Conditions: 150 mM KOAc, 10 mM MgCl2 and 150 mM bicine (pH 8.5), 24 C. The record gives the reactivity of an RNA of 207 nucleotides to 2A3 and DMS. For 2A3 the reverse transcriptase was SuperScript II with manganese. DMS adducts were read by reverse transcription with MarathonRT. Values cover nucleotides 27 to 156. For DMS, 3,580 sequencing reads were counted.
[RMDB]
RNA sequence: GGGAACGACUCGAGUAGAGUCGAAAAAUCCUUCCGACUUCGCUCAAGGGUCGGGUCUGGGUCUCAAAUUAUUGAGCUACGGUUAAUGUUGCCACCUGAGGCAUUAACAAGAGACUAGUAGGUUAGCUGCGUUGUGUUAGCCUUGCUGGCUGGCGCGGUGUGUUUAUUGGUUCGCCAAUAAACACACAAAAGAAACAACAACAACAAC
Reactivity to 2A3 in 0.01 (KOAc 150mM, MgCl2 10mM, bicine 150mM(pH8.5), 24C), signal-to-noise 2, nucleotides 027 to 156: a000u010c000c000u000u040c000c000g000a020c000u010u050c100g000c000u010c000a010a020g000g000g000u000c000g000g000g020u050c160u180g000g010g020u000c010u010c050a150a180a150u300u210a130u040u010g010a000g000c000u000a010c010g000g000u010u000a000a010u020g010u010u000g010c020c020a000c010c000u010g010a000g000g030c000a010u000u010a000a000c010a010a000g020a020g100a040c060u060a050g120u010a010g000g050u040u150a060g040c100u110g030c030g090u070u040g130u080g040u060u030a020g030c050c080u130u170g090c150u130g050g000c000u010g040g020c030g020c050g030
Reactivity to DMS in 0.01 (KOAc 150mM, MgCl2 10mM, bicine 150mM(pH8.5), 24C), signal-to-noise 1, nucleotides 027 to 156: a090u010c060c020u000u010c010c000g020a020c000u020u000c090g010c020u000c010a060a080g030g000g000u000c010g000g020g000u000c080u000g030g010g000u000c040u000c060a070a110a150u000u010a100u010u000g000a040g010c010u000a300c050g000g000u000u000a010a020u000g010u000u000g000c000c030a060c020c010u000g000a300g000g000c000a010u000u000a000a040c000a040a050g000a250g000a120c090u000a060g050u000a040g020g030u000u000a140g000c020u000g010c020g020u000u010g020u000g030u000u000a000g020c020c020u000u020g040c120u010g010g040c020u000g000g020c010g000c030g030